RNA sequence: GGGAACGACUCGAGUAGAGUCGAAAAGAUAUGGAAGCUAAAAUUUAGACGCUGCUAGCGUUGAAAUUACUGUGUCGGAAACGACAUUAAUGGAGCUGUCAGCGUCUAAAUUUUAGCUUCCUAAGUCCUGUAUAACUUAGUUCGCUAAGUUAUACAGAAAAGAAACAACAACAACAAC
Reactivity to DMS in 0.01 (KOAc 150mM, MgCl2 10mM, bicine 150mM(pH8.5), 24C), signal-to-noise 4, nucleotides 027 to 126: g000a110u010a290u010g000g000a020a000g030c000u000a010a010a030a010u000u000u000a010g000a010c020g030c000u000g000c040u000a000g010c000g010u000u020g000a120a150a010u000u000a020c300u020g010u000g010u010c010g010g000a160a120a280c010g010a010c000a000u000u000a000a000u000g000g010a100g030c000u000g010u000c000a010g000c010g000u000c010u000a000a000a010u000u000u000u000a010g000c000u000u000c000c000u000a010a100g000u000c050
An RNA of 177 nucleotides, treated with DMS and read out base by base.
DMS adducts were read by reverse transcription with MarathonRT.